[RMDB]
RNA sequence: GGGAACGACUCGAGUAGAGUCGAAAAUAAUUUACGCUGGGCCAUUAAACGCUACCCAGGGAGAGAUCUGAAGCGCGCACGGAUCUCAUCGAUCUGGUGUAGCGCACUAAUGGCCUGUGCUGAAGCGCGCACGGCAACCGAAAGGUGCGAGAUGGGCCAUAUUGGUCUAGUUCGCUAGACCAAUAUGAAAAGAAACAACAACAACAAC
Reactivity to DMS in 0.01 (KOAc 150mM, MgCl2 10mM, bicine 150mM(pH8.5), 24C), signal-to-noise 2, nucleotides 027 to 156: u010a070a080u010u000u010a120c050g030c020u000g020g000g000c000c040a090u000u000a020a100a080c040g040c010u000a030c000c000c000a040g000g020g010a060g010a050g010a030u000c000u010g030a080a020g010c030g070c020g040c030a300c030g010g000a010u000c000u000c070a150u000c170g010a040u000c020u010g000g020u010g010u000a030g030c000g070c020a050c080u000a040a030u000g010g000c000c000u000g020u000g010c010u000g020a080a080g020c010g050c020g000c000a300c040g000g010c000a080a050c030c030g010a100a160a130g040g010u010g020c000g020a150g000a100u000g000g010g000c050
Reactivity to 2A3 in 0.01 (KOAc 150mM, MgCl2 10mM, bicine 150mM(pH8.5), 24C), signal-to-noise 4, nucleotides 027 to 156: u100a000a060u060u080u200a080c020g010c000u020g000g000g000c000c000a000u020u030a120a300a080c020g000c000u000a000c000c000c000a000g010g020g000a030g000a000g000a000u000c000u020g060a200a030g020c000g010c000g000c000a000c010g010g000a000u000c000u010c010a010u300c000g000a000u000c000u010g000g000u130g010u050a000g010c000g000c000a000c000u000a000a010u000g010g000c000c010u000g010u000g000c000u010g030a140a050g010c000g000c000g000c010a020c010g000g000c000a010a000c000c000g020a060a050a030g000g000u020g000c030g000a020g030a050u180g040g060g050c030

Source information
Chemical mapping of a 207-nucleotide RNA with DMS and 2A3. For 2A3, 7,475 sequencing reads were counted. Reactivities are given for positions 27 through 156. The DMS profile rests on 5,222 reads. For DMS the reverse transcriptase was MarathonRT.